An RNA of 207 nucleotides, treated with 2A3 and DMS and read out base by base. DMS adducts were read by reverse transcription with MarathonRT. Reactivities are given for positions 27 through 156.
[RMDB]
RNA sequence: GGGAACGACUCGAGUAGAGUCGAAAAGGACUGGACCAGGACCACAGGUACCGCCGGACCCAUAUAAGGUACCAACCAGAAUAAGACAGAUACAUAAUGGGCAGCACACUGUAGCCAGUCAGAAACGCGUGCCUAGUCUACGGCACGAGUGAGCUAAGAUAAUGCAGUGAUUCGUCACUGCAUUAUCAAAAGAAACAACAACAACAAC
Reactivity to 2A3 in 0.01 (KOAc 150mM, MgCl2 10mM, bicine 150mM(pH8.5), 24C), signal-to-noise 3, nucleotides 027 to 156: g060g010a010c030u030g000g040a060c020c020a020g010g050a070c050c020a060c090a090g000g020u020a040c010c010g050c030c000g070g010a060c010c020c000a010u070a020u020a080a020g030g000u010a060c000c000a010a060c020c020a020g060a130a090u160a180a020g100a030c070a040g090a090u130a120c040a020u190a160a050u080g020g010g000c020a010g060c010a000c010a000c040u010g000u020a030g020c010c010a000g000u030c010a000g100a030a100a010c020g020c000g010u010g000c000c010u050a040g080u060c030u040a030c060g000g000c000a010c020g020a000g030u060g030a010g070c020u050a070a010
Reactivity to DMS in 0.01 (KOAc 150mM, MgCl2 10mM, bicine 150mM(pH8.5), 24C), signal-to-noise 3, nucleotides 027 to 156: g030g000a100c020u000g020g000a110c050c030a120g020g010a190c050c020a050c070a060g010g040u000a050c000c030g000c090c030g040g020a100c030c010c010a110u010a110u020a110a100g000g020u000a060c010c000a070a090c070c030a170g010a120a140u010a040a100g000a240c060a090g010a140u000a070c030a040u000a130a120u000g000g000g030c000a060g010c030a110c050a140c040u000g000u000a110g010c030c000a090g000u000c030a100g000a050a110a030c010g030c020g040u000g020c000c000u010a250g020u000c130u030a130c080g010g010c000a020c000g010a010g020u000g000a140g010c050u000a090a190